Description
Structure probing data (DMS) for a 177-nucleotide construct. Reactivities are given for positions 27 through 126. The DMS profile rests on 1,183 reads.
RNA sequence: GGGAACGACUCGAGUAGAGUCGAAAAAAAAGAUAUGGAGCGAAACGACUGAUGACCCACAUGAAAUCCGUAUAUCGGAAACGAUAUACGAAUUGUGUGGCAAGGUCUAUCGCUCCUAAGUCAAAAACCCUACCAAAUUGUUCGCAAUUUGGUAGGGAAAAGAAACAACAACAACAAC
Reactivity to DMS in 0.01 (KOAc 150mM, MgCl2 10mM, bicine 150mM(pH8.5), 24C), signal-to-noise 1, nucleotides 027 to 126: a120a010a140a110g000a020u000a010u020g010g000a040g100c000g000a000a010a120c300g000a020c000u000g030a030u000g020a040c300c000c000a010c010a010u010g020a030a010a000u000c020c000g000u000a000u000a000u000c010g050g020a000a000a010c000g020a000u000a000u010a000c000g000a000a000u000u010g020u000g000u000g000g000c020a060a000g000g010u000c000u000a220u000c010g010c000u010c000c010u000a000a030g000u040c000a140a070a080a140a080